Chemical mapping of a 177-nucleotide RNA with DMS and 2A3. The RNA was probed in 150 mM KOAc, 10 mM MgCl2 and 150 mM bicine (pH 8.5) at 24 C. The 2A3 profile rests on 28,527 reads.

[RMDB]
RNA sequence: GGGAACGACUCGAGUAGAGUCGAAAAAUUUAUAUCAGUUGAGCCUUCUGGUGAUGUUAUUGGCCACCCACAACGUCCUGAGGAAGAAUCCUUUUCAGUUGGACGUUGUGGUGAUGUGUCAGGGCACCCAGCAUUACCUGUUCGCGGGUAGUGUUGGAAAAGAAACAACAACAACAAC
Reactivity to DMS in 0.01 (KOAc 150mM, MgCl2 10mM, bicine 150mM(pH8.5), 24C), signal-to-noise 7, nucleotides 027 to 126: a060u030u020u030a080u030a070u030c100a100g010u020u010g000a100g010c130c050u000u010c040u000g000g020u010g000a080u020g020u010u010a070u040u010g010g010c000c010a030c020c010c000a000c000a000a000c000g000u000c000c000u000g010a100g000g000a040a090g010a140a130u040c150c060u010u010u010u010c060a090g010u040u020g010g010a020c000g010u000u000g010u000g010g000u010g010a040u000g000u030g020u000c010a030g000g000g000c030a040c080
Reactivity to 2A3 in 0.01 (KOAc 150mM, MgCl2 10mM, bicine 150mM(pH8.5), 24C), signal-to-noise 9, nucleotides 027 to 126: a010u130u230u070a150u030a040u090c060a030g050u050u050g070a010g030c020c010u060u070c050u060g010g060u080g080a230u050g080u080u090a190u170u060g000g000c000c000a000c010c000c000a000c000a000a000c000g000u000c000c010u030g030a040g070g020a040a070g090a150a220u150c030c010u050u030u080u130c090a140g030u130u060g040g000a000c000g000u000u010g000u000g000g010u000g000a030u000g040u010g000u000c000a000g010g020g000c020a020c000